[RMDB]
Conditions: 150 mM KOAc, 10 mM MgCl2 and 150 mM bicine (pH 8.5), 24 C. Chemical mapping of a 177-nucleotide RNA with DMS. For DMS the reverse transcriptase was MarathonRT. The DMS profile rests on 1,090 reads. The data come from the RNA Mapping Database (RMDB), library TTRDEL. Values cover nucleotides 27 to 126.
RNA sequence: GGGAACGACUCGAGUAGAGUCGAAAAGAUAUGGAUGGAGCUCGUUCAGGACACACAUCGGAAACGAUGUGAAAUCCUGGUCCGAGCGAUGAAAUCCUAAGUCAAAAGGCUAAGUUCGCUUAGCCAAUCUUUAUCGGUACUUCGGUACCGAUAAAGAAAAAGAAACAACAACAACAAC
Reactivity to DMS in 0.01 (KOAc 150mM, MgCl2 10mM, bicine 150mM(pH8.5), 24C), signal-to-noise 2, nucleotides 027 to 126: g020a070u010a300u000g000g000a010u000g000g010a050g010c010u000c000g030u000u000c010a030g000g000a010c230a300c010a000c010a000u000c000g000g000a250a080a200c020g030a020u010g040u000g000a050a080a300u010c000c000u000g000g020u010c140c040g010a010g050c010g010a020u020g040a100a100a060u000c000c000u000a070a160g000u000c050a060a090a170a060g000g000c000u000a000a010g010u010u000c210g010c000u000u000a000g000c020c000a030a030